[RMDB]
The record gives the reactivity of an RNA of 177 nucleotides to DMS. Source: RMDB library RFM100, as collected in RNAgym. Conditions: 150 mM KOAc, 10 mM MgCl2 and 150 mM bicine (pH 8.5), 24 C.
RNA sequence: GGGAACGACUCGAGUAGAGUCGAAAAACGUUCUGAGAACACGUGCACCAGCUUCCAAGCUUUCUCCCUCCCGAACCGCCCUGAUUAGUGUGUGAAGAACUGGCACAUCUCCACGAGGUUGUAAGGAACUUAGGCCCCUUUUCGAAGGGGCCUAAGUAAAAGAAACAACAACAACAAC
Reactivity to DMS in 0.01 (KOAc 150mM, MgCl2 10mM, bicine 150mM(pH8.5), 24C), signal-to-noise 1, nucleotides 027 to 126: a040c120g000u020u000c090u000g010a180g000a100a120c100a080c070g000u010g080c050a070c040c030a040g020c000u000u060c040c050a100a090g010c040u000u060u000c050u000c000c000c050u000c020c030c030g080a040a090c100c030g020c010c000c000u030g000a010u020u050a090g000u070g010u030g010u000g010a050a030g000a030a080c150u000g000g010c000a000c060a070u020c040u000c000c060a060c060g000a210g000g010u030u000g020u060a080a110g000g000a020